[RMDB]
RNA sequence: GGGAACGACUCGAGUAGAGUCGAAAACGUCCUCAAAUCUGUCAAGAUUAAUGAAGGAAAGAAGAAGGGUGUAGUCCAAACAGUUACAGGCAAAUUACUUGCUGAGACAAACUGCAUCGGCUGUGGCCUCUCAUCAUUGAUUCGUCAAUGAUGAGAGAAAAGAAACAACAACAACAAC
Reactivity to 2A3 in 0.01 (KOAc 150mM, MgCl2 10mM, bicine 150mM(pH8.5), 24C), signal-to-noise 7, nucleotides 027 to 126: c010g070u020c010c000u010c010a050a040a020u020c020u080g270u190c090a100a030g030a050u040u090a090a110u190g060a120a030g020g020a070a050a070g080a040a020g070a020a050g100g000g000u020g000u020a020g030u020c080c060a060a080a050c040a040g000u030u050a040c060a050g010g030c010a020a070a120u210u090a130c090u040u020g000c010u040g010a010g010a070c020a020a050a000c010u030g000c000a010u040c020g070g010c040u080g040u080g170g030c010
Reactivity to DMS in 0.01 (KOAc 150mM, MgCl2 10mM, bicine 150mM(pH8.5), 24C), signal-to-noise 9, nucleotides 027 to 126: c150g000u000c000c000u000c030a050a050a020u000c010u000g000u020c300a080a040g010a030u000u000a100a070u010g010a110a060g000g000a050a070a110g000a100a090g010a110a070g010g010g010u000g010u000a030g000u000c060c080a070a090a120c100a060g000u000u000a060c140a220g010g000c020a020a030a180u010u010a120c230u000u000g010c000u010g000a210g010a070c070a060a050a040c030u000g010c040a040u000c120g000g010c040u000g010u000g000g010c140